RNA sequence: GGGAACGACUCGAGUAGAGUCGAAAAUCAUGCUGUACCGACUCUCUUUAGACUUAAGGGAGGUGCACCUGUAAAAAAAGUAGCCUUUGGCGGUGAUCAAGUACAUGAGGUUGCUGCUGUAAGAAGUGAACACGACGGUUCGCCGUCGUGAAAAGAAACAACAACAACAAC
Reactivity to 2A3 in 0.01 (KOAc 150mM, MgCl2 10mM, bicine 150mM(pH8.5), 24C), signal-to-noise 3, nucleotides 027 to 129: u180c140a040u100g000c070u000g010u020a050c010c110g230a200c040u030c000u000c010u010u120u030a170g010a130c020u140u100a060a050g010g000g020a110g030g000u000g010c000a010c000c000u060g110u110a130a020a020a000a000a000a000g010u030a090g010c000c000u050u000u060g090g000c000g000g000u030g000a030u060c040a140a000g040u080a080c060a130u210g140a000g030g010u000u000g000c030u030g000c000u010g060u080a040a030g020a100a040g050u000g080a020a010
Reactivity to DMS in 0.01 (KOAc 150mM, MgCl2 10mM, bicine 150mM(pH8.5), 24C), signal-to-noise 2, nucleotides 027 to 129: u030c050a000u000g030c090u020g060u020a060c060c000g030a260c050u020c020u000c000u000u000u000a000g020a170c210u070u030a050a080g030g040g040a080g030g060u030g020c070a070c040c030u000g020u040a000a000a100a040a050a060a080g030u040a090g030c060c040u020u040u000g020g000c000g010g070u020g010a050u000c040a090a160g010u060a100c140a040u070g030a000g000g000u000u040g010c000u000g010c000u000g020u040a000a000g000a140a100g020u070g040a060a060